[RMDB]
RNA sequence: GGGAACGACUCGAGUAGAGUCGAAAACUUCUCAGAAUCCAGCGAGAGGCGUGGAGAGAGGGCCGCGGUGCUCUGGAGUAGAGGCUCUGCCUUCGAAACACCAUCGAUCGUCCCUUCUUCUUUACCUCAAACCUUAUUGGUUCGCCAAUAAGGUUUGAAAAGAAACAACAACAACAAC
Reactivity to DMS in 0.01 (KOAc 150mM, MgCl2 10mM, bicine 150mM(pH8.5), 24C), signal-to-noise 2, nucleotides 027 to 126: c190u000u000c010u000c020a160g010a140a080u000c140c120a110g010c090g000a090g010a040g000g010c180g010u000g000g000a010g000a070g010a010g000g010g000c140c030g030c030g010g020u010g000c000u000c010u000g000g010a040g010u000a070g000a030g000g000c000u040c250u020g020c020c010u000u010c010g000a140a160a180c010a020c150c000a020u000c000g000a130u010c010g000u000c000c000c010u010u000c020u000u000c010u000u000u010a080c030c020u010
Reactivity to 2A3 in 0.01 (KOAc 150mM, MgCl2 10mM, bicine 150mM(pH8.5), 24C), signal-to-noise 1, nucleotides 027 to 126: c030u060u030c000u000c030a030g120a120a110u070c090c040a040g070c040g070a080g010a050g110g050c040g060u110g010g000a020g010a010g020a000g010g010g010c010c000g050c010g020g000u010g000c020u000c000u020g020g010a010g000u010a000g010a010g000g000c050u040c100u300g040c010c000u120u120c020g000a000a000a000c000a020c110c000a010u020c010g070a300u010c000g010u000c000c000c000u000u010c000u030u020c000u000u010u040a050c000c000u030
Record summary: The record gives the reactivity of an RNA of 177 nucleotides to DMS and 2A3. For DMS, 2,004 sequencing reads were counted. Reactivities are given for positions 27 through 126.